Structure probing data (2A3) for a 207-nucleotide construct. The reactions ran in a buffer of 150 mM KOAc, 10 mM MgCl2 and 150 mM bicine (pH 8.5), at 24 C. 2A3 adducts were read by reverse transcription with SuperScript II with manganese.
RNA sequence: GGGAACGACUCGAGUAGAGUCGAAAACUCGCUGUUUUUGUGGCUUGCUUUCAGCGGGCUGGAGGAGCCGGGAGCGGAGGCGGAGGACCGAGCCAAAAACGUCAGCCGAGGCCGGGCGGCCCCGCUCAAAAUCUUCGUAUCUUCGGAUACGAAGAAAGCUUGAUUAUAACUUCGGUUAUAAUCAAGCAAAAGAAACAACAACAACAAC
Reactivity to 2A3 in 0.01 (KOAc 150mM, MgCl2 10mM, bicine 150mM(pH8.5), 24C), signal-to-noise 2, nucleotides 027 to 156: c010u010c010g000c030u030g050u050u010u000u050u070g130u110g040g030c060u050u120g040c020u040u160u150c030a030g020c070g130g070g020c050u030g020g030a010g010g000a010g010c020c020g050g090g000a010g000c010g020g050a190g030g010c050g020g070a090g070g050a050c020c020g020a040g000c010c000a070a090a050a020a030c040g060u080c050a040g060c060c020g010a030g000g030c010c000g010g010g020c000g040g010c020c000c000c000g000c000u020c010a070a080a020a080u000c010u000u000c000g000u010a000u000c010u020u020c100g090g000a000u000a000c000g010a000a000g010a010a000a000